[RMDB]
RNA sequence: GGGAACGACUCGAGUAGAGUCGAAAAGGGUCAUAUCUUAACGUGCAUGAACAACAACCGAUUCAUAUUGAGAAUUUACGGAAAAUACAAGGACAACCCAUACGUUAAAAUAGUGUAUAAAAAAGAUGACCCGAUCUUGAACGAUAUUGCGAAAUUACUUAUAGGCUCUAUUCGUAGAGCCUAUAAGAAAAGAAACAACAACAACAAC
Reactivity to 2A3 in 0.01 (KOAc 150mM, MgCl2 10mM, bicine 150mM(pH8.5), 24C), signal-to-noise 3, nucleotides 027 to 156: g020g000g000u000c010a010u040a050u110c020u020u020a030a040c080g020u000g010c020a040u210g040a110a030c080a030a010c010a040a040c080c000g020a000u050u020c030a020u050a210u250u250g120a180g010a060a070u090u130u130a100c030g010g050a070a000a110a050u150a040c050a040a110g070g030a050c040a030a070c000c000c030a010u070a100c040g010u030u050a040a010a060a070u090a110g050u010g020u040a040u120a060a130a020a020a000a010g000a020u000g000a000c010c000c000g000a000u020c060u030u110g040a050a030c030g040a050u090a070u130u200g030c020g070a110a130a040u220u270a030
Reactivity to DMS in 0.01 (KOAc 150mM, MgCl2 10mM, bicine 150mM(pH8.5), 24C), signal-to-noise 2, nucleotides 027 to 156: g000g020g040u010c010a080u000a040u000c020u000u000a080a080c080g040u020g000c070a060u000g060a140a080c020a100a100c060a060a160c030c020g000a120u000u000c020a180u000a170u010u010g010a190g010a060a090u010u010u010a240c090g000g010a110a060a100a110u020a140c070a040a100g000g000a140c060a070a110c090c000c010a150u020a050c050g020u000u010a020a010a020a080u000a180g020u000g010u000a090u030a000a040a050a070a080a040g000a060u000g010a040c020c010c000g010a030u000c020u000u000g000a110a150c090g000a120u000a040u000u010g000c060g020a030a110a150u000u010a180